Structure probing data (DMS and 2A3) for a 170-nucleotide construct. For DMS the reverse transcriptase was MarathonRT. Conditions: 150 mM KOAc, 10 mM MgCl2 and 150 mM bicine (pH 8.5), 24 C. For DMS, 7,963 sequencing reads were counted. The 2A3 profile rests on 7,718 reads. Source: RMDB library 15KLIB, as collected in RNAgym. 2A3 adducts were read by reverse transcription with SuperScript II with manganese.
[RMDB]
RNA sequence: GGGAACGACUCGAGUAGAGUCGAAAAGAUAUAGAAUACCAGAAUGUAUUCUGGGUCUACUUACAGUAUAUAGAAAAACUGUAUAAAGACCUUACAGGACACAUGCUUGACAGUUAUUCUGUCAUGCUACGGUUCAGCUUCGGCUGAACCAAAAGAAACAACAACAACAAC
Reactivity to DMS in 0.01 (KOAc 150mM, MgCl2 10mM, bicine 150mM(pH8.5), 24C), signal-to-noise 4, nucleotides 027 to 129: g010a210u080a060u010a040g040a060a030u010a000c010c230a170g060a060a160u090g020u020a070u010u120c020u020g000g010g000u010c000u010a150c240u080u000a000c000a030g050u010a070u040a300u020a120g060a160a110a120a150a000c000u020g020u020a000u000a160a160a070g000a100c010c030u000u000a150c160a040g010g020a010c090a010c060a000u050g000c000u030u030g030a000c040a020g010u010u070a110u000u040c020u050g030u010c000a000u010g000c030u020a070c190
Reactivity to 2A3 in 0.01 (KOAc 150mM, MgCl2 10mM, bicine 150mM(pH8.5), 24C), signal-to-noise 4, nucleotides 027 to 129: g010a020u110a020u130a070g010a010a010u060a110c020c040a070g110a170a040u180g010u010a010u020u010c000u000g020g010g000u010c020u020a120c070u030u010a000c000a000g020u010a060u030a030u090a190g230a040a050a010a010a000c000u000g010u020a010u000a010a070a000g000a000c000c000u000u000a030c020a030g000g090a000c020a010c010a090u100g000c000u000u000g000a000c030a010g000u090u070a190u250u070c000u000g000u020c000a000u040g000c000u000a050c070